Chemical mapping of a 177-nucleotide RNA with 2A3 and DMS. Reactivities are given for positions 27 through 126. 2A3 adducts were read by reverse transcription with SuperScript II with manganese. The data come from the RNA Mapping Database (RMDB), library OK2TRN.

[RMDB]
RNA sequence: GGGAACGACUCGAGUAGAGUCGAAAAGUUACGGAUCUUAGGCACAUCCAAAUGGCACAUAAGUAAUGAUUUUUAAGGAACAUCAGAUAAAACUCAAUAUGUUAGCCAAUCUACAGAAAAGUUCCUGCGGGAGGUAAUGAUUCGUCAUUACCUCCCGAAAAGAAACAACAACAACAAC
Reactivity to 2A3 in 0.01 (KOAc 150mM, MgCl2 10mM, bicine 150mM(pH8.5), 24C), signal-to-noise 1, nucleotides 027 to 126: g050u040u050a080c060g010g020a040u020c020u080u080a020g070g000c060a060c010a120u060c030c020a030a110a070u060g040g040c030a000c000a030u070a030a060g060u130a240a070u050g060a030u050u000u000u000u180a050a040g040g030a070a030c020a070u070c020a000g040a100u070a110a160a030a000c000u000c030a000a060u040a010u140g000u030u020a010g000c010c000a010a050u040c030u030a030c020a000g080a100a030a000a010g010u000u000c000c010u000g030
Reactivity to DMS in 0.01 (KOAc 150mM, MgCl2 10mM, bicine 150mM(pH8.5), 24C), signal-to-noise 2, nucleotides 027 to 126: g030u010u010a170c110g000g000a040u010c070u000u020a180g020g010c030a120c180a040u010c010c050a040a070a140u010g000g040c000a030c050a020u000a010a100g000u000a090a070u000g020a050u000u010u000u000u000a120a210g000g000a040a010c120a050u000c040a100g000a140u000a060a050a070a010c160u020c040a000a040u010a010u010g010u010u010a110g020c040c020a030a040u000c040u000a040c120a240g000a040a070a170a280g000u000u000c010c010u000g000